The record gives the reactivity of an RNA of 177 nucleotides to DMS and 2A3. The reactions ran in a buffer of 150 mM KOAc, 10 mM MgCl2 and 150 mM bicine (pH 8.5), at 24 C. In probing experiments dimethyl sulfate is read out at A N1 and C N3, which are open when not base-paired.

RNA sequence: GGGAACGACUCGAGUAGAGUCGAAAAACGGACGCUACGGCGUCCGAAUGCAGAUCCUUGGGAGCCCUGUUAGACUCUGGAUUUUACACUUGGAGUGAACGGGCGCCAUCCCGAGGCUUUGCACAAAGUCACUACUAAUUUUCGAAUUAGUAGUGACAAAAGAAACAACAACAACAAC
Reactivity to DMS in 0.01 (KOAc 150mM, MgCl2 10mM, bicine 150mM(pH8.5), 24C), signal-to-noise 6, nucleotides 027 to 126: a110c020g010g010a010c000g020c000u000a090c170g030g010c000g020u000c000c000g000a020a030u010g010c020a020g000a020u000c000c000u000u000g000g010g000a120g000c010c000c010u010g000u000u000a090g010a020c000u000c010u000g010g000a120u010u010u020u020a130c270a100c070u010u020g020g000a010g000u000g000a040a020c000g000g000g000c160g020c060c100a120u010c000c000c010g010a020g000g010c100u000u000u000g010c010a050c180a070a070a140
Reactivity to 2A3 in 0.01 (KOAc 150mM, MgCl2 10mM, bicine 150mM(pH8.5), 24C), signal-to-noise 9, nucleotides 027 to 126: a000c010g000g000a000c000g010c010u040a030c260g140g000c000g000u000c000c000g000a020a010u040g000c000a000g000a020u010c000c000u000u000g020g020g020a060g030c010c000c000u010g020u010u030a120g070a080c000u000c010u020g100g040a160u080u100u120u300a110c160a040c060u100u230g020g000a010g000u020g040a010a000c000g000g010g000c040g000c010c030a090u020c000c000c000g000a000g000g000c000u000u000u000g020c030a010c040a040a080a010

For DMS the reverse transcriptase was MarathonRT. It was measured as part of the RMDB libraries RFM100 and RFMREP.